[RMDB]
An RNA of 177 nucleotides, treated with 2A3 and DMS and read out base by base. The data come from the RNA Mapping Database (RMDB), library VIROID. DMS adducts were read by reverse transcription with MarathonRT. For DMS, 1,564 sequencing reads were counted. The reactions ran in a buffer of 150 mM KOAc, 10 mM MgCl2 and 150 mM bicine (pH 8.5), at 24 C.

RNA sequence: GGGAACGACUCGAGUAGAGUCGAAAACUCCCUUAGCCAUCCGAGUGGACGUCCGUCCUCCUUCGGAUGCCCAGGUCGGACCGCGAGGAGGUGGAGAUGCCAUGCCGACCCGAAGAGGAAAGAAGAACCUCUGAAUAAGGUUCGCCUUAUUCAGAGGAAAAGAAACAACAACAACAAC
Reactivity to 2A3 in 0.01 (KOAc 150mM, MgCl2 10mM, bicine 150mM(pH8.5), 24C), signal-to-noise 2, nucleotides 027 to 126: c010u020c020c000c000u010u100a050g020c040c020a020u010c010c010g000a020g010u030g000g000a020c000g150u190c110c120g010u010c080c000u020c000c140u030u050c010g000g010a000u010g000c000c020c000a070g050g060u020c010g040g010a100c040c040g000c030g060a050g000g020a040g140g000u090g040g080a290g000a030u190g030c000c020a020u120g000c030c000g100a050c020c000c020g050a080a050g070a060g080g080a100a130a020g100a030a030g020a020a080
Reactivity to DMS in 0.01 (KOAc 150mM, MgCl2 10mM, bicine 150mM(pH8.5), 24C), signal-to-noise 2, nucleotides 027 to 126: c170u010c000c000c010u000u010a070g040c120c020a020u000c000c000g000a070g010u010g000g020a030c020g020u010c210c150g000u010c020c020u000c070c110u010u000c000g020g010a020u010g020c050c050c030a070g020g000u010c020g010g010a130c030c120g000c060g010a090g020g020a090g020g010u010g010g010a110g020a060u000g000c020c030a090u010g020c010c010g020a010c000c010c000g000a030a090g020a040g000g000a060a060a090g000a120a160g020a160a130